Structure probing data (DMS and 2A3) for a 177-nucleotide construct. The 2A3 profile rests on 5,244 reads. The reactions ran in a buffer of 150 mM KOAc, 10 mM MgCl2 and 150 mM bicine (pH 8.5), at 24 C. For 2A3 the reverse transcriptase was SuperScript II with manganese.
[RMDB]
RNA sequence: GGGAACGACUCGAGUAGAGUCGAAAAGAUAUGGACACGGUGUAGACAUGCUUUAUUCGGAAACGAAAGUCAUUGAGCAACAGCUACCCGUGUCCUAAGUCAAAAGAGGGUCGUUCGCGACCCUCAAGUAAUAGGGUUACUUCGGUAACCCUAUUACAAAAGAAACAACAACAACAAC
Reactivity to DMS in 0.01 (KOAc 150mM, MgCl2 10mM, bicine 150mM(pH8.5), 24C), signal-to-noise 4, nucleotides 027 to 126: g010a020u000a150u010g000g000a010c010a000c010g000g010u010g020u000a010g010a050c080a100u010g000c010u000u000u010a180u020u000c010g020g000a030a040a080c000g010a020a040a070g010u020c140a070u010u010g010a120g010c100a050a080c260a100g000c000u000a010c000c000c000g000u000g010u000c000c000u000a000a050g010u000c010a070a060a110a130g000a030g000g010g010u010c000g000u010u020c200g020c000g000a010c000c000c000u010c000a000a020
Reactivity to 2A3 in 0.01 (KOAc 150mM, MgCl2 10mM, bicine 150mM(pH8.5), 24C), signal-to-noise 3, nucleotides 027 to 126: g000a000u020a020u060g000g000a000c000a000c010g030g020u100g000u050a030g050a110c040a110u040g000c000u120u120u120a160u220u230c010g040g010a030a000a020c000g040a020a000a000g110u270c090a090u080u300g030a030g060c070a040a110c040a060g050c010u000a000c000c000c000g000u020g000u000c000c000u010a000a000g000u000c000a000a010a070a060g010a000g000g000g000u010c020g030u070u140c300g040c010g100a010c010c000c000u000c000a000a000

The DMS profile rests on 4,821 reads.